[RMDB]
RNA sequence: GGGAACGACUCGAGUAGAGUCGAAAACGAGAUGAGUUCGCUCAUCUCGAAAGAACCGCGGGCGUGACUCGGUCACAGCAUGACAGGCGCUGCGGUCACGAAAAAGUGGUGUGUUCGCACACCACAACGUAAGUAUUGCCUUCGGGCAAUACUUACGAAAAGAAACAACAACAACAAC
Reactivity to DMS in 0.01 (KOAc 150mM, MgCl2 10mM, bicine 150mM(pH8.5), 24C), signal-to-noise 2, nucleotides 027 to 126: c010g020a000g010a000u000g030a020g000u000u020c290g010c020u000c000a000u000c000u000c010g000a020a080a160g030a130a110c000c010g020c080g010g060g000c000g000u000g000a080c090u010c160g010g050u000c030a070c090a020g000c040a300u000g010a030c130a040g030g010c000g030c010u000g010c020g000g010u030c030a120c150g010a070a030a070a100a020g000u000g000g000u000g000u000g000u000u000c170g020c000a000c010a010c000c000a010c000a030a020
Reactivity to 2A3 in 0.01 (KOAc 150mM, MgCl2 10mM, bicine 150mM(pH8.5), 24C), signal-to-noise 2, nucleotides 027 to 126: c010g000a000g000a020u020g000a000g040u090u140c220g090c040u010c000a010u000c000u000c000g010a000a020a010g040a010a020c000c020g000c050g060g020g030c030g010u030g160a130c020u040c300g090g000u030c000a030c050a070g190c080a080u130g040a030c020a050g030g010c020g000c020u010g000c010g010g010u020c030a090c090g170a120a050a020a020a040g000u000g010g000u000g000u010g040u050u070c130g020c060a000c000a000c000c000a010c000a010a010